[RMDB]
Description:
Chemical mapping of a 177-nucleotide RNA with DMS and 2A3. Values cover nucleotides 27 to 126. The reactions ran in a buffer of 150 mM KOAc, 10 mM MgCl2 and 150 mM bicine (pH 8.5), at 24 C. Source: RMDB library TTRDEL, as collected in RNAgym.
RNA sequence: GGGAACGACUCGAGUAGAGUCGAAAAGAUAUGGAGUCCUCUUGGCUUGGAUUUAAUGUGUUUCGGAAACGAAACACCACUUUGUCAGCCAAUGACUCCUAAGUCAAAACGCCGGUUCGCCGGCGAACUACAAUAGACGGUUCGCCGUCUAUUGUAGAAAAGAAACAACAACAACAAC
Reactivity to DMS in 0.01 (KOAc 150mM, MgCl2 10mM, bicine 150mM(pH8.5), 24C), signal-to-noise 3, nucleotides 027 to 126: g000a070u000a300u000g000g010a020g000u000c000c020u010c000u000u000g010g000c000u010u000g030g020a010u010u000u010a140a020u010g000u010g000u000u000u000c000g010g000a120a090a260c000g000a010a010a020c000a010c010c090a020c060u000u000u000g020u000c010a050g000c010c010a230a030u010g000a060c010u000c000c000u000a010a070g020u000c030a090a050a110a140c030g010c000c010g000g010u000u020c220g020c010c010g000g000c000g010a010a060
Reactivity to 2A3 in 0.01 (KOAc 150mM, MgCl2 10mM, bicine 150mM(pH8.5), 24C), signal-to-noise 4, nucleotides 027 to 126: g020a020u050a070u210g000g010a020g010u020c000c000u020c010u010u010g000g000c030u080u290g220g020a100u300u260u210a090a040u280g000u000g000u010u000u000c020g030g010a070a090a070c000g010a010a000a010c010a000c000c000a070c030u030u030u030g010u030c020a000g010c010c010a000a030u050g000a000c000u000c000c000u020a040a000g000u010c000a010a030a130a160c030g010c010c020g000g050u070u030c260g050c100c000g000g020c000g000a020a010